[RMDB]
RNA sequence: GGGAACGACUCGAGUAGAGUCGAAAACGAUAGCGCUCACAAACACCUCACCAUGUCCCCAAGGAGGCUGCGCCCAUUACCACACAGAGAAGGGAUCUUACGUCACCGGAUUAAAGAAGAAUGUCAAGACUUUCAGGCUGGUAACGGAGAAGGUAAAGCAUCAUCUGAAUUUCGAUUCAGAUGAUGCAAAAGAAACAACAACAACAAC
Reactivity to 2A3 in 0.01 (KOAc 150mM, MgCl2 10mM, bicine 150mM(pH8.5), 24C), signal-to-noise 3, nucleotides 027 to 156: c060g050a060u090a040g010c000g000c000u030c050a060c040a000a160a000c040a050c010c000u030c040a060c030c020a070u080g100u080c030c000c000c000a000a050g050g000a030g000g000c010u050g000c040g070c000c000c020a010u030u110a030c030c000a020c010a020c050a060g080a010g020a100a060g030g010g020a040u000c030u070u080a060c050g020u040c060a020c070c020g060g060a140u090u150a080a060a000g080a020a000g040a020a020u070g030u120c040a010a040g020a030c000u030u030u070c030a030g080g000c050u010g040g000u020a040a020c040g010g020a030g020a100a040g070g010u050a040a080a010
Reactivity to DMS in 0.01 (KOAc 150mM, MgCl2 10mM, bicine 150mM(pH8.5), 24C), signal-to-noise 1, nucleotides 027 to 156: c060g000a160u000a080g020c010g050c040u030c110a090c090a050a060a150c040a080c010c000u000c010a030c000c010a020u000g040u010c030c010c000c000a070a170g020g000a070g040g080c010u000g040c000g000c050c000c030a080u000u010a070c010c030a060c010a070c110a090g000a120g000a120a130g000g020g030a050u000c040u000u020a030c020g000u000c010a070c030c020g040g000a150u000u020a050a080a010g000a100a130g000a030a070u010g000u000c070a140a120g000a130c030u000u000u000c010a100g020g010c000u020g050g030u010a080a070c040g010g020a060g010a070a050g000g030u000a030a090a180